Notes:
Chemical mapping of a 207-nucleotide RNA with DMS and 2A3. The reactions ran in a buffer of 150 mM KOAc, 10 mM MgCl2 and 150 mM bicine (pH 8.5), at 24 C. For 2A3 the reverse transcriptase was SuperScript II with manganese.
RNA sequence: GGGAACGACUCGAGUAGAGUCGAAAAAUACAGUGUCUUAGGGAGUCAUUGCUUUGAACAGACACCAUGACCAAGGCAACUCAUAUAAGGACAACAUUUAAUUGCGGCCUGCUUACAGGUUCAGAGGUUUAGUCCAUUAUCAUCAUGACAGGAAGUAAUUUAAUACCACGUUCGCGUGGUAUUAAAUAAAAGAAACAACAACAACAAC
Reactivity to DMS in 0.01 (KOAc 150mM, MgCl2 10mM, bicine 150mM(pH8.5), 24C), signal-to-noise 3, nucleotides 027 to 156: a110u000a080c050a140g030u010g030u000c030u000u000a160g040g020g000a130g010u010c060a150u000u000g020c030u000u010u000g010a100a130c040a100g020a170c070a040c090c060a090u000g010a140c070c030a040a110g040g010c030a040a050c040u000c050a070u020a150u000a070a090g010g000a090c030a040a060c050a090u000u000u000a060a110u000u010g030c060g020g000c040c040u000g020c060u000u000a130c060a070g000g010u010u000c030a150g010a130g010g010u010u000u000a080g020u000c000c010a070u000u000a040u000c050a050u010c090a100u000g000a090c050a110g030g020a030a100g000u000a040
Reactivity to 2A3 in 0.01 (KOAc 150mM, MgCl2 10mM, bicine 150mM(pH8.5), 24C), signal-to-noise 4, nucleotides 027 to 156: a010u190a020c050a030g070u030g010u020c020u040u080a060g050g050g000a060g020u030c060a150u070u080g010c020u050u010u100g080a140a080c050a050g160a060c060a060c100c020a060u070g030a050c020c020a010a000g010g000c000a000a060c050u000c060a030u110a000u030a150a050g050g010a030c030a120a010c000a080u080u180u140a130a120u110u120g080c040g040g010c020c010u010g000c030u090u100a070c010a040g050g000u050u080c030a020g060a070g130g030u050u140u140a030g010u030c000c000a000u000u040a010u010c010a020u010c020a020u090g040a020c020a040g050g090a120a000g050u080a030